[RMDB]
RNA sequence: GGGAACGACUCGAGUAGAGUCGAAAAUCGACGACCACGUCGGUGAGCACCGGGCCGCCGGAAGUCAUCCGCGGCCGGAUCAGCAAGGACGGCGAACAGUUAACGCUGGUCAUCGGGGUGGCCGCGAGGCCAUGUGCAUCUUCGGAUGCACAUGGCCAAAAGAAACAACAACAACAAC
Reactivity to DMS in 0.01 (KOAc 150mM, MgCl2 10mM, bicine 150mM(pH8.5), 24C), signal-to-noise 2, nucleotides 027 to 126: u000c020g020a140c020g030a060c020c040a040c000g000u000c000g010g010u000g000a150g010c140a190c020c010g010g000g010c000c030g010c080c060g020g000a050a170g000u010c230a100u000c030c010g000c000g000g010c020c000g000g000a050u000c090a030g050c030a150a170g000g000a050c030g010g030c010g030a070a110c050a150g010u000u010a140a090c070g010c010u000g010g020u000c000a000u000c020g000g000g010g030u000g000g000c000c000g010c020g000a060
Reactivity to 2A3 in 0.01 (KOAc 150mM, MgCl2 10mM, bicine 150mM(pH8.5), 24C), signal-to-noise 3, nucleotides 027 to 126: u040c010g160a160c000g000a030c020c010a040c150g300u000c000g000g020u010g020a050g020c050a030c070c000g040g180g080c010c020g090c060c050g000g020a020a040g210u120c090a130u020c050c000g000c010g000g000c010c000g000g010a030u040c010a000g000c000a060a110g260g020a010c000g020g040c030g030a110a080c040a080g010u080u080a060a030c060g000c000u050g020g050u010c010a000u030c010g030g000g000g000u000g010g040c010c000g000c010g030a060